RNA sequence: GGGAACGACUCGAGUAGAGUCGAAAACACAAGGAUGGACUACUGCCAACGUCCUUGAAUCCAAGGUUGGUUUAAGUGAGCAGUUCGCUCCAGGAUUGCACCUUAACGUCAACACGACUUUUAGCCCUGCAACUGCCGCCAAGACUGCUAUUCUCAACAGGCAUUUACUAUUCGUAGUAAAUGCCUGAAAAGAAACAACAACAACAAC
Reactivity to 2A3 in 0.01 (KOAc 150mM, MgCl2 10mM, bicine 150mM(pH8.5), 24C), signal-to-noise 4, nucleotides 027 to 156: c090a000c010a010a010g030g010a020u040g030g060a040c060u150a050c070u280g100c060c030a070a040c010g010u000c000c000u000u020g030a070a030u020c040c000a050a020g080g010u020u060g030g050u050u040u120a090a070g040u070g080a010g010c010a010g010u030u060c030g020c040u060c060c050a020g020g060a070u000u060g000c010a070c070c000u020u040a020a020c050g030u010c010a030a100c150a080c270g040a060c030u030u010u000u090a020g020c010c030c030u020g020c020a050a010c010u020g020c000c020g010c020c010a040a020g010a030c020u010g000c000u080a090u080u030c050u040c020a020a180
Reactivity to DMS in 0.01 (KOAc 150mM, MgCl2 10mM, bicine 150mM(pH8.5), 24C), signal-to-noise 2, nucleotides 027 to 156: c050a170c020a060a030g000g030a070u010g010g020a100c030u000a120c120u010g010c030c020a100a100c010g030u000c010c000u000u010g010a120a100u000c070c040a120a110g030g020u010u010g000g000u010u000u010a060a150g030u010g000a150g030c000a100g010u000u000c030g020c080u030c090c050a100g000g010a060u020u010g040c020a120c050c000u000u010a040a040c100g030u000c010a030a070c080a140c100g020a060c050u000u000u000u080a100g010c000c000c010u000g010c070a040a060c010u000g020c020c020g030c050c020a030a160g020a070c090u000g000c010u000a270u000u000c010u000c010a020a300